[RMDB]
RNA sequence: GGGAACGACUCGAGUAGAGUCGAAAAUCAGGGUGUGGCACACAUCAUCCAACAGGGAGCUGCUGCGGAUCACCGUGCCCAACAUGACCUGCCACGGCAUCGACUUCAUGAGGGACGGCAAAAGCAACGAUACCUCGCUAUUCGUAGCGAGGUAUCGAAAAGAAACAACAACAACAAC
Reactivity to 2A3 in 0.01 (KOAc 150mM, MgCl2 10mM, bicine 150mM(pH8.5), 24C), signal-to-noise 2, nucleotides 027 to 126: u120c020a030g000g120g000u050g050u030g140g000c060a010c010a050c020a160u090c020a060u000c010c020a050a050c020a050g020g030g050a020g010c030u050g000c020u010g020c080g040g020a020u050c020a010c070c030g030u150g090c030c000c000a050a100c020a030u020g060a030c010c010u030g010c000c010a050c060g050g000c020a060u090c020g090a090c060u090u040c010a070u060g020a040g030g000g020a020c000g020g000c040a050a050a020a040g090c020a030a120
Reactivity to DMS in 0.01 (KOAc 150mM, MgCl2 10mM, bicine 150mM(pH8.5), 24C), signal-to-noise 2, nucleotides 027 to 126: u020c110a080g000g020g060u000g070u000g090g000c040a080c080a030c080a090u010c100a090u020c070c070a100a110c170a140g000g020g020a120g030c090u000g010c030u000g000c040g000g010a080u020c130a110c020c070g040u000g030c020c050c050a070a010c070a050u000g000a110c170c030u000g020c020c020a090c110g060g010c040a070u010c100g010a050c090u000u000c020a040u020g000a190g000g000g010a030c050g040g000c040a020a030a060a050g010c090a080a110